[RMDB]
RNA sequence: GGGAACGACUCGAGUAGAGUCGAAAAAGUUAGAUGCUUAUCUGGACGCGAACAUUGGUAAACAUAUCAGCCAGAAUUCAGAGACAAAGGCGAUGAUUGAGGUGCUGACAUCACGCAUGCACGAGCGUCAGCAAUCUCUCUUCGGAGAGAUUGCUGAAAAAGAAACAACAACAACAAC
Reactivity to DMS in 0.01 (KOAc 150mM, MgCl2 10mM, bicine 150mM(pH8.5), 24C), signal-to-noise 3, nucleotides 027 to 126: a070g000u000u000a050g020a110u020g000c040u000u000a060u010c040u000g000g000a060c070g030c080g010a040a100c050a130u000u010g020g020u000a040a110a140c090a050u010a040u000c050a100g010c010c020a070g000a110a100u010u010c040a050g000a130g000a070c100a030a080a110g050g000c030g020a060u000g020a060u000u010g010a100g010g010u000g000c060u000g000a060c100a070u000c080a030c070g000c060a040u000g010c050a070c050g000a130g010c130g010
Reactivity to 2A3 in 0.01 (KOAc 150mM, MgCl2 10mM, bicine 150mM(pH8.5), 24C), signal-to-noise 2, nucleotides 027 to 126: a000g080u090u050a100g020a090u100g000c010u160u110a020u110c020u020g000g040a020c030g010c040g060a070a040c020a150u030u100g000g020u070a040a090a030c040a020u120a050u090c060a000g040c040c010a010g050a030a030u060u060c040a020g010a000g010a140c000a070a060a050g000g000c040g040a090u070g030a040u050u090g070a030g000g000u090g000c010u020g050a040c000a020u070c040a010c020g020c010a010u160g000c030a030c100g040a020g000c060g070